[RMDB]
RNA sequence: GGGAACGACUCGAGUAGAGUCGAAAAUAUAUCUGGUACCUUAAGCUCAGGAAAGACUGAAGUCGCUAGAUACUUGACUUUCCAAGGGUUCAAGCUAAUUUCAUUUAAACAGGAAGGCCAUGAAUCAAAUCACGUGAUAUUUCGAUAUCACGUGAUUAAAAGAAACAACAACAACAAC
Reactivity to DMS in 0.01 (KOAc 150mM, MgCl2 10mM, bicine 150mM(pH8.5), 24C), signal-to-noise 4, nucleotides 027 to 126: u030a120u000a060u000c010u000g010g000u010a110c140c010u000u020a090a080g010c070u020c010a080g020g030a100a080a060g010a110c040u010g000a020a040g000u000c040g030c090u010a040g020a050u020a020c120u000u000g010a060c150u010u000u000c010c040a130a130g000g020g020u000u020c050a030a140g000c040u000a060a050u010u010u000c030a010u030u020u030a030a120a140c200a100g000g010a020a020g000g020c010c030a040u030g000a030a080u000c040a050
Reactivity to 2A3 in 0.01 (KOAc 150mM, MgCl2 10mM, bicine 150mM(pH8.5), 24C), signal-to-noise 8, nucleotides 027 to 126: u180a010u000a020u010c010u010g010g020u060a090c030c000u030u100a080a010g020c020u020c080a040g110g110a190a110a040g080a160c030u070g090a060a000g020u060c050g010c070u030a010g000a050u030a100c040u030u070g070a070c020u010u040u000c020c030a050a110g100g010g000u000u020c020a020a010g000c010u040a140a090u040u030u010c040a060u040u080u220a120a150a060c090a040g040g000a020a020g030g000c010c040a110u150g020a010a000u050c000a070

Structure probing data (DMS and 2A3) for a 177-nucleotide construct. Values are in units of 0.01, from 0 to 300, in steps of 10. Reactivities are given for positions 27 through 126. The data come from the RNA Mapping Database (RMDB), library OK1LIB. High 2A3 reactivity points to a flexible backbone, as in loops and unpaired stretches. The RNA was probed in 150 mM KOAc, 10 mM MgCl2 and 150 mM bicine (pH 8.5) at 24 C.